[RMDB]
RNA sequence: GGGAACGACUCGAGUAGAGUCGAAAAGCAUUGUCGAUACCCUGCGCAAAGGUAAGGUAUCGCCCGAUGCCGAGCCGCAGAUCCAUGACCAGGCGCCGGGGAUUGCGCGGGCGGACGCCGGGGGCGCAGUAGCGAUGACGUUCGCGUCAUCGCUACUAAAAGAAACAACAACAACAAC
Reactivity to 2A3 in 0.01 (KOAc 150mM, MgCl2 10mM, bicine 150mM(pH8.5), 24C), signal-to-noise 1, nucleotides 027 to 126: g030c020a020u000u050g060u100c010g000a000u010a020c000c010c040u060g010c040g000c100a060a110a060g140g000u060a030a060g000g020u020a000u030c070g030c040c010c030g030a020u020g020c000c000g020a000g070c000c020g010c040a030g060a060u050c010c040a040u080g000a130c000c090a070g020g020c010g000c000c030g030g010g000g020a030u010u100g050c000g000c060g000g000g010c060g060g000a020c060g000c030c030g010g000g000g060g000c050g000c020
Reactivity to DMS in 0.01 (KOAc 150mM, MgCl2 10mM, bicine 150mM(pH8.5), 24C), signal-to-noise 1, nucleotides 027 to 126: g000c040a050u010u070g000u010c000g040a020u000a030c090c000c150u010g050c070g070c040a040a130a140g000g000u010a010a110g000g020u000a000u000c040g010c150c180c100g000a030u000g030c020c010g000a300g060c000c000g000c050a090g000a150u000c050c060a110u040g000a170c060c040a080g000g000c000g000c060c040g000g000g000g000a040u000u020g010c040g000c060g000g000g000c020g000g000a040c030g000c000c080g000g020g010g000g000c030g050c070
Chemical mapping of a 177-nucleotide RNA with 2A3 and DMS. Values cover nucleotides 27 to 126. For 2A3 the reverse transcriptase was SuperScript II with manganese.